RNA sequence: GGGAACGACUCGAGUAGAGUCGAAAAAGAGCAGCGUGUAACAGACUUUAUCAGUUAGACUUCUGCGUGAUACAGCAGGACUGGUACGAGGCGCAUCUUCGGAAAGAGUGCAUGAGACUUCAAGUCGGAGUGGCGGUCUUUUCGAAGACCGCCACUCAAAAGAAACAACAACAACAAC
Reactivity to 2A3 in 0.01 (KOAc 150mM, MgCl2 10mM, bicine 150mM(pH8.5), 24C), signal-to-noise 1, nucleotides 027 to 126: a000g180a050g020c100a020g010c060g020u010g030u070a090a050c000a070g050a020c030u040u040u000a140u050c000a100g000u000u140a010g050a130c000u050u010c000u070g000c050g000u010g030a010u020a160c100a000g000c030a000g020g020a030c030u060g000g000u000a050c040g000a000g010g000c060g080c040a070u090c000u040u030c050g000g060a070a000a000g120a090g060u270g030c090a100u170g070a060g000a080c000u000u040c300a070a050g040u070c000g060
Reactivity to DMS in 0.01 (KOAc 150mM, MgCl2 10mM, bicine 150mM(pH8.5), 24C), signal-to-noise 1, nucleotides 027 to 126: a000g020a090g000c180a010g040c300g050u000g060u000a070a100c170a060g000a030c050u000u140u010a060u000c070a090g040u030u000a200g000a270c200u000u040c000u000g040c000g000u000g030a060u110a000c270a210g000c000a000g060g030a040c040u020g000g020u000a000c110g000a080g000g110c250g020c000a060u000c000u000u050c120g120g040a000a010a000g050a050g000u060g000c090a000u000g000a300g000a050c000u000u020c260a140a070g000u050c010g000